[RMDB]
RNA sequence: GGGAACGACUCGAGUAGAGUCGAAAACGCAGCUGCUGGUGCACACAGCGGCCAAGGCCAGCUCCACAUUCCUCCCUCCAGCUCCCCACUUCACCGGAGACCGAGCCCUGCAUGCAGAGGAAGGGCCGAUACUAGAGAUCUUCGGAUCUCUAGUAUCAAAAGAAACAACAACAACAAC
Reactivity to DMS in 0.01 (KOAc 150mM, MgCl2 10mM, bicine 150mM(pH8.5), 24C), signal-to-noise 3, nucleotides 027 to 126: c070g000c110a130g020c030u000g010c010u000g000g010u010g030c140a080c130a110c060a040g000c030g010g020c010c030a070a130g030g000c030c040a090g000c020u010c040c040a080c100a120u010u010c010c010u000c010c030c010u000c020c040a080g010c070u000c020c000c010c030a070c060u020u000c050a080c080c040g010g000a060g010a120c050c030g010a120g000c010c010c010u000g000c090a050u010g010c060a100g000a130g010g020a170a070g000g000g010c070c080

Source: RMDB library RFMREP, as collected in RNAgym. This 177-nucleotide RNA was probed chemically with DMS. The RNA was probed in 150 mM KOAc, 10 mM MgCl2 and 150 mM bicine (pH 8.5) at 24 C. DMS adducts were read by reverse transcription with MarathonRT.